[RMDB]
RNA sequence: GGGAACGACUCGAGUAGAGUCGAAAAAUGGAGGGGCUUACGUCCUAUGAUGCCGAUGGAAAUUUUACCCACUGGGGCUGGCUUAAUGUGCGAGAGAUCACUAUGGGUUUACGCCAAACCGGUCUCCGCACAUGAAGAUGUUCGCAUCUUCAUGUGCAAAAGAAACAACAACAACAAC
Reactivity to 2A3 in 0.01 (KOAc 150mM, MgCl2 10mM, bicine 150mM(pH8.5), 24C), signal-to-noise 1, nucleotides 027 to 126: a000u110g030g010a020g020g020g000g030c030u070u140a030c050g040u020c010c000u010a060u170g060a020u090g050c030c030g040a040u000g060g030a050a090a070u140u150u060u110a100c030c030c010a040c120u090g050g000g000g000c000u020g000g000c010u030u160a080a010u130g050u080g070c030g020a290g010a010g000a140u010c020a010c100u090a090u080g020g000g000u030u080u080a050c090g030c000c010a070a020a030c030c030g020g000u000c000u030c000c000
Reactivity to DMS in 0.01 (KOAc 150mM, MgCl2 10mM, bicine 150mM(pH8.5), 24C), signal-to-noise 4, nucleotides 027 to 126: a050u010g020g010a060g010g000g000g020c040u000u000a080c150g010u000c020c040u000a090u020g010a140u010g010c020c040g020a110u010g010g000a090a090a150u010u010u000u020a140c030c000c030a110c170u000g000g000g000g020c030u000g010g000c080u010u000a070a060u000g010u000g010c010g000a160g000a020g000a010u000c010a080c100u020a240u010g010g000g010u000u000u000a080c240g000c030c020a000a040a110c300c090g000g000u000c010u010c010c110
An RNA of 177 nucleotides, treated with 2A3 and DMS and read out base by base. It was measured as part of the RMDB library OK2TRN. For 2A3, 1,582 sequencing reads were counted. The RNA was probed in 150 mM KOAc, 10 mM MgCl2 and 150 mM bicine (pH 8.5) at 24 C. Values cover nucleotides 27 to 126.